[RMDB]
RNA sequence: GGGAACGACUCGAGUAGAGUCGAAAAUUGCUGGAAUGUUGGCACAGGUUAGGUCAAAGUUAGGUUUGACAAACAGUGAAAGUUAUGAUUUCAAGCUAUACUCUGAAGAGCUACCAUUGAUUAUGAAAGCCUAUCCAAUGUUCGCAUUGGAUAGGCUAAAAGAAACAACAACAACAAC
Reactivity to DMS in 0.01 (KOAc 150mM, MgCl2 10mM, bicine 150mM(pH8.5), 24C), signal-to-noise 1, nucleotides 027 to 126: u000u000g000c040u030g000g000a070a050u000g020u020u010g010g000c000a090c080a060g000g000u000u000a060g000g000u000c010a020a030a050g000u000u010a140g020g020u000u000u000g000a000c070a070a030a010c070a050g020u000g000a050a040a050g000u000u010a100u000g020a110u010u000u010c020a060a050g000c010u010a120u010a050c000u010c020u000g010a110a040g000a120g000c070u000a080c040c010a090u010u000g010a110u000u000a050u000g010a070a090
An RNA of 177 nucleotides, treated with DMS and read out base by base.
For DMS, 1,113 sequencing reads were counted.
Conditions: 150 mM KOAc, 10 mM MgCl2 and 150 mM bicine (pH 8.5), 24 C.
Source: RMDB library OK2TRN, as collected in RNAgym.